[RMDB]
About this RNA: An RNA of 177 nucleotides, treated with 2A3 and read out base by base. Values cover nucleotides 27 to 126. The reactions ran in a buffer of 150 mM KOAc, 10 mM MgCl2 and 150 mM bicine (pH 8.5), at 24 C. The data come from the RNA Mapping Database (RMDB), library OK2TRN. The 2A3 profile rests on 597 reads.
RNA sequence: GGGAACGACUCGAGUAGAGUCGAAAAAUCCAUAUGUUUAGCGACACAUUCUCAUUAGGUGUUGCACUUGUCGCAUUUAUUUAUGCUGAAAAGAAUGCCACAACUACAAAAACAUUUGGUUAUAAACGUGCGAAUAGUCGUUCGCGACUAUUCGCACAAAAGAAACAACAACAACAAC
Reactivity to 2A3 in 0.01 (KOAc 150mM, MgCl2 10mM, bicine 150mM(pH8.5), 24C), signal-to-noise 1, nucleotides 027 to 126: a000u000c010c000a000u010a050u070g000u000u070u060a010g020c000g030a010c000a000c000a050u180u170c110u030c070a160u090u160a110g280g000u000g040u040u000g000c000a000c000u000u060g060u000c020g000c030a020u040u030u050a150u000u170u030a130u200g130c070u050g090a040a080a000a030g040a100a030u000g000c000c080a030c000a040a000c040u190a040c040a030a210a040a060a000c010a010u050u040u050g070g100u110u050a170u020a180a160a070c030